[RMDB]
RNA sequence: GGGAACGACUCGAGUAGAGUCGAAAACAACACAUGGAGGCUGCUUGAUGUGGUGGGGGUAGGGAGGUGUUGCUGUCACUUGAGGCAGAGAGAGAAGGAAGCCUGGCCACGCUGGCACAGUGUGCCAAUCAAACCACGUGGCCUCAUGCAAUAGAGAUAUUAGGAUUAAUUUCGAUUAAUCCUAAUAAAAAGAAACAACAACAACAAC
Reactivity to 2A3 in 0.01 (KOAc 150mM, MgCl2 10mM, bicine 150mM(pH8.5), 24C), signal-to-noise 2, nucleotides 027 to 156: c040a020a060c000a000c020a070u080g060g020a000g060g030c060u040g000c010u080u110g100a120u090g120u110g030g040u130g010g000g000g000g050u040a050g030g030g020a030g000g000u090g010u000u060g020c020u010g030u070c010a060c180u080u170g030a110g060g020c020a020g000a020g000a000g020a000g010a090a030g030g010a100a000g010c000c050u010g030g000c040c000a020c020g000c060u010g010g070c040a020c110a180g140u070g000u010g270c010c000a000a030u100c050a000a060a080c040c020a010c060g000u010g000g000c000c000u020c010a020u020g000c010a040a150u110a110g060a000g100a070
Reactivity to DMS in 0.01 (KOAc 150mM, MgCl2 10mM, bicine 150mM(pH8.5), 24C), signal-to-noise 1, nucleotides 027 to 156: c000a100a070c030a070c070a050u020g010g010a120g010g030c040u000g000c000u000u000g010a130u010g000u000g050g000u000g000g010g050g020g020u010a100g000g000g000a060g060g020u010g030u000u000g010c010u000g010u000c060a140c100u020u000g010a150g040g010c030a080g020a130g010a170g010a120g020a190a100g000g010a110a200g000c040c060u000g020g010c010c020a010c000g000c080u000g000g040c000a010c040a180g000u020g010u000g030c000c010a080a080u020c150a070a070a130c040c130a000c030g050u010g010g000c000c030u000c060a060u010g020c000a080a100u020a150g010a200g010a200
Conditions: 150 mM KOAc, 10 mM MgCl2 and 150 mM bicine (pH 8.5), 24 C. This 207-nucleotide RNA was probed chemically with 2A3 and DMS. 2A3 adducts were read by reverse transcription with SuperScript II with manganese. For DMS, 2,372 sequencing reads were counted. For 2A3, 1,062 sequencing reads were counted. As a SHAPE reagent, 2A3 marks flexible, mostly unpaired nucleotides at the ribose 2'-OH. Reactivities are given for positions 27 through 156.